[RMDB]
Background
Chemical mapping of a 177-nucleotide RNA with DMS. Source: RMDB library TTRINS, as collected in RNAgym. The reactions ran in a buffer of 150 mM KOAc, 10 mM MgCl2 and 150 mM bicine (pH 8.5), at 24 C. For DMS, 4,810 sequencing reads were counted.

RNA sequence: GGGAACGACUCGAGUAGAGUCGAAAAGAUAUGGACCCACCGAAGCCAUGUUCAGCGUUGAAAGGAAGGGAAGCUCGGAAACGAGCUUCCCUUCCUGGAGCUGACAUGUCGAAGUGGGUCCUAAGUCCGUUCCUUUAAUGUUCGCAUUAAAGGAACGAAAAGAAACAACAACAACAAC
Reactivity to DMS in 0.01 (KOAc 150mM, MgCl2 10mM, bicine 150mM(pH8.5), 24C), signal-to-noise 4, nucleotides 027 to 126: g010a090u000a300u010g000g010a010c000c000c000a010c020c020g000a260a300g000c160c000a020u000g000u020u000c010a020g000c010g020u010u020g010a190a190a030g000g040a030a020g020g020g010a040a020g030c000u000c000g010g020a110a110a250c010g020a010g000c000u000u000c000c000c000u000u000c000c000u000g000g010a070g010c000u000g010a010c020a000u000g010u000c000g000a300a120g000u000g010g000g010u010c000c010u000a000a070g010u000c050